[RMDB]
RNA sequence: GGGAACGACUCGAGUAGAGUCGAAAAAGCCAAUCCUUCGGGAUUGGCUACAGCAACGAAGCAAAGCAACGAGACAAGACGAGCAAAAGAUCGAGCAUGCUUCACACCCCAUCUUCGGAUGGGGUAACGUGACAGUACAGUUCGCUGUACUGUCACGAAAAGAAACAACAACAACAAC
Reactivity to DMS in 0.01 (KOAc 150mM, MgCl2 10mM, bicine 150mM(pH8.5), 24C), signal-to-noise 2, nucleotides 027 to 126: a000g020c000c000a000a010u000c000c000u000u000c170g010g020g000a010u000u000g000g010c000u000a020c020a040g030c200a080a070c080g010a060a040g010c020a120a090a110g020c020a070a080c070g010a120g000a070c110a140a080g020a060c110g010a150g020c060a060a080a110a010g010a030u020c000g000a160g010c060a110u020g000c010u000u000c060a130c160a060c000c000c000c000a010u000c000u030u030c110g050g030a020u000g000g000g000g010u000a000a000
Reactivity to 2A3 in 0.01 (KOAc 150mM, MgCl2 10mM, bicine 150mM(pH8.5), 24C), signal-to-noise 2, nucleotides 027 to 126: a000g000c010c010a000a010u020c000c000u020u110c230g080g010g000a000u010u000g010g000c010u000a000c000a000g050c020a050a060c110g030a010a000g000c010a010a110a030g010c010a050a260c040g020a000g060a070c050a100a040g120a090c110g070a040g110c080a090a090a000a020g030a050u020c010g010a000g030c020a010u040g010c000u020u010c020a010c000a010c020c010c010c000a000u000c010u010u030c190g130g000a000u000g000g000g000g000u000a010a000